[RMDB]
RNA sequence: GGGAACGACUCGAGUAGAGUCGAAAACGGAUAUCACUCUCAUGCUGGAGUGCAGAGAGUGAGAAACGUUCCGGCGCUGUAGGAUGUGGCUGCGGCCGAUUAGGUAGAUGGUGGGGUAACGGCCCACUUAAGAUGAUGUAUUCGUACAUCAUCUUAAAAAAGAAACAACAACAACAAC
Reactivity to 2A3 in 0.01 (KOAc 150mM, MgCl2 10mM, bicine 150mM(pH8.5), 24C), signal-to-noise 9, nucleotides 027 to 126: c010g010g020a030u030a010u100c000a000c000u000c000u010c050a300u040g000c020u140g120g300a290g100u140g030c000a000g000a000g000a000g000u000g000a000g000a010a060a000c010g010u060u020c020c010g040g010c050g000c020u050g020u050a030g030g120a280u090g060u080g110g000c010u010g020c020g030g010c000c010g050a100u100u170a060g060g070u060a050g020a160u080g030g000u010g000g000g000g010u010a030a000c010g070g000c000c000c000a000c000
Reactivity to DMS in 0.01 (KOAc 150mM, MgCl2 10mM, bicine 150mM(pH8.5), 24C), signal-to-noise 9, nucleotides 027 to 126: c010g000g000a050u000a140u000c000a000c000u000c000u000c000a100u010g020c000u010g020g030a170g020u010g020c000a030g000a010g000a020g010u000g000a010g000a050a110a080c010g000u000u010c040c020g010g020c070g020c030u000g010u000a050g000g010a100u010g020u010g010g010c020u000g010c050g010g010c020c020g000a080u010u020a070g010g010u010a070g010a090u010g000g010u000g000g000g000g000u000a060a100c140g000g000c010c000c010a020c040